The data come from the RNA Mapping Database (RMDB), libraries RFM100 and RFMREP. This 177-nucleotide RNA was probed chemically with 2A3 and DMS. 2A3 adducts were read by reverse transcription with SuperScript II with manganese.

RNA sequence: GGGAACGACUCGAGUAGAGUCGAAAAGAAAGAAAGGCCGUGGCCCGGAAGUGGUCGGGGCCGCUGCGGGCGGAAGGGCGCCUGUGCUUCGUCCGCUCGGCGGUGGCCCAGCCAGGCCCGCGGGAAAAUGUAUGGUAUCUUUCGAGAUACCAUACAUAAAAGAAACAACAACAACAAC
Reactivity to 2A3 in 0.01 (KOAc 150mM, MgCl2 10mM, bicine 150mM(pH8.5), 24C), signal-to-noise 7, nucleotides 027 to 126: g060a030a110a010g080a050a080a020g110g020c010c010g030u030g010g010c010c010c030g070g070a130a050g100u120g060g080u100c190g030g000g000g000c000c000g000c000u000g000c000g010g000g000c000g010g010a020a020g070g010g000c030g060c040c130u230g130u180g060c010u080u130c060g080u010c010c000g020c010u010c020g190g000c010g010g010u010g010g000c000c000c000a010g010c010c000a010g000g010c000c050c000g020c010g000g020g030a030a150a020
Reactivity to DMS in 0.01 (KOAc 150mM, MgCl2 10mM, bicine 150mM(pH8.5), 24C), signal-to-noise 6, nucleotides 027 to 126: g000a110a090a110g010a100a110a090g000g000c020c010g040u010g010g010c070c010c040g010g010a080a200g010u020g010g020u000c050g010g020g000g010c010c000g000c010u000g020c010g010g000g010c000g000g000a070a080g000g000g000c010g010c260c170u040g010u030g010c000u010u010c050g000u000c000c010g010c000u000c010g030g040c010g010g020u000g010g010c000c000c000a090g000c010c020a100g010g000c180c010c020g020c040g000g000g000a090a060a120

The reactions ran in a buffer of 150 mM KOAc, 10 mM MgCl2 and 150 mM bicine (pH 8.5), at 24 C.